The record gives the reactivity of an RNA of 207 nucleotides to 2A3 and DMS. The reactions ran in a buffer of 150 mM KOAc, 10 mM MgCl2 and 150 mM bicine (pH 8.5), at 24 C. For 2A3, 9,623 sequencing reads were counted. Source: RMDB library RSTRND, as collected in RNAgym. For DMS the reverse transcriptase was MarathonRT.
RNA sequence: GGGAACGACUCGAGUAGAGUCGAAAAUUUGUUCGGUAUUGUACCACCGUUAUCGGGCUAAACUUGUAGUUGCAAAUGACAACUAUGCGGAAGCUCGUCUCGCUGCUUAAUUGCGGUGUGACACUUCACAUUAAGCCCUAGAGGGUCGCACUUCUAGCUAUAUAUUCAACUUCGGUUGAAUAUAUAGAAAAGAAACAACAACAACAAC
Reactivity to 2A3 in 0.01 (KOAc 150mM, MgCl2 10mM, bicine 150mM(pH8.5), 24C), signal-to-noise 9, nucleotides 027 to 156: u100u060u110g070u060u090c030g010g020u060a060u050u130g060u050a070c010c030a010c000c020g090u090u040a030u080c030g000g000g000c020u000a090a060a060c080u080u170g020u040a010g000u000u000g010c060a100a210a300u210g040a230c010a010a020c010u010a020u070g080c110g060g010a010a000g000c080u090c210g040u000c020u020c010g010c010u020g000c010u090u150a090a080u300u070g000c000g000g000u010g020u030g010a000c010a020c010u000u010c010a020c000a070u080u140a060a030g000c000c020c000u010a020g020a080g040g010g000u060c040g020c040a050c010u030u000c010u040a020g000
Reactivity to DMS in 0.01 (KOAc 150mM, MgCl2 10mM, bicine 150mM(pH8.5), 24C), signal-to-noise 2, nucleotides 027 to 156: u000u000u000g000u000u010c000g020g010u000a070u000u010g020u000a080c080c010a130c030c020g020u000u010a050u000c060g040g000g040c010u000a050a070a110c070u000u000g020u000a030g000u000u000g000c020a050a100a130u000g010a070c000a020a020c040u000a020u000g000c080g000g000a030a040g010c040u000c110g040u000c020u000c030g010c000u000g000c000u000u000a050a180u000u010g030c000g020g030u000g000u000g010a050c010a050c020u000u020c020a080c060a070u000u000a120a150g010c020c040c010u010a070g010a120g020g020g010u000c090g000c050a060c040u010u000c040u000a100g000